[RMDB]
RNA sequence: GGGAACGACUCGAGUAGAGUCGAAAAUUACUGGGCAUGUUUUGGGCUGGUCGGCGUCAGCUAUUUCGGUAUACGAGAGAUGCAGAAUAUUUUAUUUGAAUAUCAACGACUUAAAUCAUAGUUGUUUGAAUAGCAGUAAAUUCGUUUACUGCUAUUCAAAAGAAACAACAACAACAAC
Reactivity to 2A3 in 0.01 (KOAc 150mM, MgCl2 10mM, bicine 150mM(pH8.5), 24C), signal-to-noise 5, nucleotides 027 to 126: u120u070a090c040u050g010g000g000c010a060u040g070u090u100u090u080g110g000g000c010u030g060g020u070c030g020g000c010g020u020c020a010g010c010u060a100u060u090u050c020g010g030u080a080u030a230c050g000a010g000a000g000a120u070g010c010a010g070a180a040u070a090u050u070u030u050a210u090u160u180g040a030a020u030a030u120c030a060a070c040g030a030c040u110u170a050a070a060u130c050a030u050a080g020u020u030g000u000u010u030
Reactivity to DMS in 0.01 (KOAc 150mM, MgCl2 10mM, bicine 150mM(pH8.5), 24C), signal-to-noise 2, nucleotides 027 to 126: u010u000a100c030u010g010g020g010c030a040u030g000u010u000u010u000g010g010g010c030u010g020g000u000c050g020g000c060g000u000c060a050g010c010u000a080u000u010u030c040g020g000u010a090u030a070c040g020a070g000a070g000a090u000g010c030a120g000a040a040u010a030u010u000u020u020a110u020u020u000g010a020a040u000a060u000c060a060a060c050g000a070c020u000u020a100a080a120u010c080a060u010a080g000u000u000g000u000u000u000

Background: An RNA of 177 nucleotides, treated with 2A3 and DMS and read out base by base. Values are in units of 0.01, from 0 to 300, in steps of 10. 2A3 adducts were read by reverse transcription with SuperScript II with manganese. The RNA was probed in 150 mM KOAc, 10 mM MgCl2 and 150 mM bicine (pH 8.5) at 24 C.